[RMDB]
RNA sequence: GGGAACGACUCGAGUAGAGUCGAAAAGCAUUGACGGUCGAGAGCACGGUUCGCGGCAGUUUCUCGGCCUGGAAGAGCCGCGUGCGGCCACCGCUGGUCGAGCUGUCCUGGUGCAACUUCACCACGCAGUUCCACUAGGUUUCGACCUAGUGGAACUAAAAGAAACAACAACAACAAC
Reactivity to DMS in 0.01 (KOAc 150mM, MgCl2 10mM, bicine 150mM(pH8.5), 24C), signal-to-noise 3, nucleotides 027 to 126: g000c100a180u000u010g010a090c140g000g010u010c070g020a080g010a220g010c050a030c090g000g010u010u010c100g020c120g000g010c040a050g000u000u030u010c030u000c010g000g010c010c010u000g000g000a060a110g010a190g000c010c020g030c070g020u000g010c010g010g010c010c040a090c070c030g010c170u010g010g010u000c020g000a030g000c030u000g000u000c000c050u020g000g010u010g010c070a070a080c070u010u000c200a050c010c020a150c230g010c090
Reactivity to 2A3 in 0.01 (KOAc 150mM, MgCl2 10mM, bicine 150mM(pH8.5), 24C), signal-to-noise 3, nucleotides 027 to 126: g010c050a150u080u220g120a070c080g030g010u070c050g030a000g010a000g060c040a020c100g080g040u230u180c080g000c060g040g000c010a010g010u050u260u000c010u000c000g000g040c020c010u020g020g040a140a060g030a050g040c010c020g020c010g010u060g050c000g000g000c000c010a030c020c030g050c180u060g000g010u010c000g000a010g000c000u000g020u030c000c020u050g140g000u010g000c020a110a110c040u090u020c030a030c060c020a020c010g040c050

An RNA of 177 nucleotides, treated with DMS and 2A3 and read out base by base. For 2A3 the reverse transcriptase was SuperScript II with manganese. It was measured as part of the RMDB library OK2TST. For DMS, 2,833 sequencing reads were counted. The reactions ran in a buffer of 150 mM KOAc, 10 mM MgCl2 and 150 mM bicine (pH 8.5), at 24 C.